[RMDB]
RNA sequence: GGGAACGACUCGAGUAGAGUCGAAAAGAACAGGAUAACAGGACGCAAGAUAGGAAGUUCGGAUGAAUCGAGAAGAGCCGUAACUCGAGAACAACGGCAGCGUCCUGAAGAAUUUACGGCUCAAGAAAGUAUCCACGGAUUUCGAUCCGUGGAUACUAAAAGAAACAACAACAACAAC
Reactivity to 2A3 in 0.01 (KOAc 150mM, MgCl2 10mM, bicine 150mM(pH8.5), 24C), signal-to-noise 2, nucleotides 027 to 126: g040a050a000c050a070g050g110a110u080a190a040c000a000g000g050a000c000g040c000a000a280g090a290u170a050g100g180a180a000g050u160u120c000g010g000a150u150g000a110a000u040c000g000a000g000a140a000g040a000g040c000c000g010u000a010a160c000u020c030g000a000g020a040a070c020a010a010c000g000g010c000a010g000c000g000u000c000c000u010g000a000a000g000a000a000u080u010u000a000c020g000g000c010u000c000a020a020g070a080a250
Reactivity to DMS in 0.01 (KOAc 150mM, MgCl2 10mM, bicine 150mM(pH8.5), 24C), signal-to-noise 2, nucleotides 027 to 126: g000a190a160c240a100g000g000a070u030a120a160c000a000g020g000a040c000g010c000a090a160g040a300u010a110g060g000a130a100g020u000u000c000g000g030a080u040g000a110a170u000c000g020a020g000a150a040g010a000g000c000c000g000u000a010a050c000u020c020g020a030g040a140a080c070a120a290c040g040g020c080a050g020c000g030u000c000c000u000g000a020a070g020a050a060u030u000u010a000c000g000g000c030u000c000a210a070g000a070a040